[RMDB]
RNA sequence: GGGAACGACUCGAGUAGAGUCGAAAAGAGUGUUAUAUUAUCACGCCUAAUCACUGACGCAUCAUUGUCACAUCAUUGAAGGUGAAGGCGUGACAAUGAGGUGUUAGUGAUAAGGCGUGAUGAUGUGAUUUGUUAUAAAGAGGUGUUCGCACCUCAAACUAGAAUGAUGCUUCGGCAUCAUUCUAGUAAAAGAAACAACAACAACAAC
Reactivity to 2A3 in 0.01 (KOAc 150mM, MgCl2 10mM, bicine 150mM(pH8.5), 24C), signal-to-noise 7, nucleotides 027 to 156: g150a040g040u110g020u100u060a050u010a010u060u010a000u000c000a000c000g000c010c000u040a070a040u010c000a000c000u000g010a000c000g000c010a030u000c000a000u000u000g010u000c000a000c000a010u020c010a030u040u200g210a180a080g170g010u100g050a090a050g190g050c110g020u000g000a000c000a000a000u000g000a000g000g010u010g000u010u000a000g000u000g000a000u000a000a000g000g000c010g000u000g000a000u000g010a000u000g000u010g010a030u010u070u090g060u050u060a120u080a110a130a040g010a000g000g010u020g020u050u120c170g040c060a010c000c000u000c010a030a020
Reactivity to DMS in 0.01 (KOAc 150mM, MgCl2 10mM, bicine 150mM(pH8.5), 24C), signal-to-noise 2, nucleotides 027 to 156: g010a160g020u000g000u000u000a020u010a020u010u000a020u000c010a010c020g010c000c000u000a240a100u000c000a020c000u010g000a030c010g030c010a070u000c010a020u000u000g020u000c000a020c020a150u000c040a130u000u010g030a140a180g030g060u000g000a100a130g010g040c090g040u010g000a000c000a010a000u000g020a050g000g070u000g020u010u000a000g000u000g000a010u000a030a040g010g000c010g010u010g000a000u000g010a010u000g020u000g010a050u000u000u010g010u000u000a190u000a090a130a120g000a060g020g000u000g000u000u010c060g020c010a020c010c000u000c010a010a090
An RNA of 207 nucleotides, treated with 2A3 and DMS and read out base by base. 2A3 adducts were read by reverse transcription with SuperScript II with manganese. For DMS, 7,840 sequencing reads were counted. The reactions ran in a buffer of 150 mM KOAc, 10 mM MgCl2 and 150 mM bicine (pH 8.5), at 24 C. Reactivities are given for positions 27 through 156.